The record gives the reactivity of an RNA of 207 nucleotides to 2A3. The data come from the RNA Mapping Database (RMDB), library OK3TST. For 2A3 the reverse transcriptase was SuperScript II with manganese. Conditions: 150 mM KOAc, 10 mM MgCl2 and 150 mM bicine (pH 8.5), 24 C.
[RMDB]
RNA sequence: GGGAACGACUCGAGUAGAGUCGAAAAUUUGCGGUCCAAAUACUUGAGUGUGUAAACGGUGCAUUGGGUGUGCACAGCGGUACCCAGAAUCUCCAACUAGCUCCUCAUGAGCUGGGUGGGGCAUGCAGGGAAGGAGGCAAAGCUUCCCACCUGUCUACGUCAUUAAAUCCUUCGGGAUUUAAUGACGAAAAGAAACAACAACAACAAC
Reactivity to 2A3 in 0.01 (KOAc 150mM, MgCl2 10mM, bicine 150mM(pH8.5), 24C), signal-to-noise 1, nucleotides 027 to 156: u030u000u140g070c020g050g060u010c040c000a080a080a010u150a060c040u130u150g030a050g050u000g020u030g020u060a040a250a000c000g010g000u010g050c030a040u050u170g100g040g040u080g050u010g060c040a000c000a040g070c030g000g090u090a060c020c010c010a010g020a070a010u110c000u000c020c000a020a030c000u000a000g000c000u010c010c020u180c120a190u300g010a000g000c020u030g000g000g000u020g000g000g000g000c030a060u130g000c000a020g030g000g050a060a040g020g000a020g040g000c060a080a030a090g000c000u010u010c000c000c000a040c000c020u020g060u030c000u080a060